[RMDB]
RNA sequence: GGGAACGACUCGAGUAGAGUCGAAAAGAAGAGCAGGCAGAUAAUCUUGUGCAGUAUGCAUGCUCGUAACUCCAGCGCACAAGUGGAGGCACAAGAUUUAAAUCCAGCAUAGCGCAGGAGCCGCAGAGCAUAUGGAUUAUUUCGAUAAUCCAUAUGCAAAAGAAACAACAACAACAAC
Reactivity to DMS in 0.01 (KOAc 150mM, MgCl2 10mM, bicine 150mM(pH8.5), 24C), signal-to-noise 8, nucleotides 027 to 126: g010a100a100g000a010g010c000a010g010g010c000a070g000a150u050a080a080u010c000u000u010g020u000g010c010a230g020u010a080u010g010c010a050u000g010c000u000c010g010u010a080a240c000u000c010c010a080g020c020g010c030a090c190a120a120g010u010g010g000a050g000g000c000a010c010a010a020g000a140u010u020u030a030a080a110u010c010c010a070g020c160a110u020a080g000c020g000c000a070g010g010a020g000c050c050g000c150a070g010a200
Reactivity to 2A3 in 0.01 (KOAc 150mM, MgCl2 10mM, bicine 150mM(pH8.5), 24C), signal-to-noise 9, nucleotides 027 to 126: g100a040a000g010a000g000c010a020g030g000c010a000g030a120u110a090a030u040c010u010u010g000u010g000c030a060g070u140a050u090g030c030a010u050g020c010u010c030g010u030a020a010c000u000c010c010a020g010c020g010c010a030c030a240a110g090u040g050g030a030g030g020c000a000c000a010a000g000a000u030u060u130a080a080a030u030c010c000a000g040c060a190u150a130g010c020g000c040a040g010g000a010g020c020c030g040c060a030g020a010